[RMDB]
RNA sequence: GGGAACGACUCGAGUAGAGUCGAAAAGAUAUGGAAAAAGUCUGCGAUAAGAAGCAGUCGGAAACGACUGGCUUCUUUUGACGCAGUCGCUUCCUAAGUCAAAGCUAAGCAGUUCGCUGCUUAGCAAGCGUAGAUAUCUGUUCGCAGAUAUCUACGCAAAAGAAACAACAACAACAAC
Reactivity to 2A3 in 0.01 (KOAc 150mM, MgCl2 10mM, bicine 150mM(pH8.5), 24C), signal-to-noise 1, nucleotides 027 to 126: g000a000u070a010u040g000g070a000a040a030a020a060g020u050c010u000g000c010g150a170u010a300a000g000a000a040g000c010a010g000u010c000g000g040a040a040a020c000g000a000c010u000g030g110c000u010u000c000u000u010u020u050g050a000c020g000c000a000g010u000c020g040c120u000u000c000c000u060a090a010g020u000c090a140a000a040g000c000u010a000a000g000c000a000g020u090u230c300g050c160u000g000c000u030u000a020g000c000a020a000
Reactivity to DMS in 0.01 (KOAc 150mM, MgCl2 10mM, bicine 150mM(pH8.5), 24C), signal-to-noise 2, nucleotides 027 to 126: g010a020u000a170u010g010g000a020a030a070a180a130g030u010c000u000g010c010g000a140u000a000a010g030a020a020g010c000a000g000u000c010g010g000a050a040a110c010g000a000c000u000g000g000c000u000u000c000u000u000u000u000g020a170c040g030c000a010g000u000c030g000c300u000u000c000c010u010a050a080g000u000c030a100a110a110g000c000u010a000a010g010c020a020g010u000u000c290g020c010u010g000c000u000u000a010g000c000a000a000